The record gives the reactivity of an RNA of 207 nucleotides to 2A3. As a SHAPE reagent, 2A3 marks flexible, mostly unpaired nucleotides at the ribose 2'-OH. The RNA was probed in 150 mM KOAc, 10 mM MgCl2 and 150 mM bicine (pH 8.5) at 24 C.
RNA sequence: GGGAACGACUCGAGUAGAGUCGAAAACGCUGGGUAUCGGGAACGACAGCGAAGAACAUCUGAAGCGCGCACGGAUGGGAGCUGCGUUUCUCUAGCGUGUACCUGUGCUGAAGCGCGCACGGCAACCGAAAGGUGCGAAUUCUCAGAUUCGUCUGAGGGUAAUUCCCGAAUUCGUUCGGGAAUUACCAAAAGAAACAACAACAACAAC
Reactivity to 2A3 in 0.01 (KOAc 150mM, MgCl2 10mM, bicine 150mM(pH8.5), 24C), signal-to-noise 3, nucleotides 027 to 156: c010g030c010u060g060g020g070u300a180u300c160g030g000g040a000a000c010g300a190c020a000g010c010g090a120a020g020a000a010c000a000u000c020u030g050a150a030g000c000g000c000g010c000a000c000g020g000a000u040g000g000g000a010g000c000u000g000c030g010u010u010u000c050u000c010u020a010g000c000g010u010g010u060a090c000c000u100g100u060g100c010u040g010a190a050g020c020g000c000g000c000a000c000g010g000c020a030a070c010c010g060a100a060a040g070g000u040g040c060g080a120a170u230u030c030u020c020a030g000a060u060u080c100g130u000c060u020g050a070g000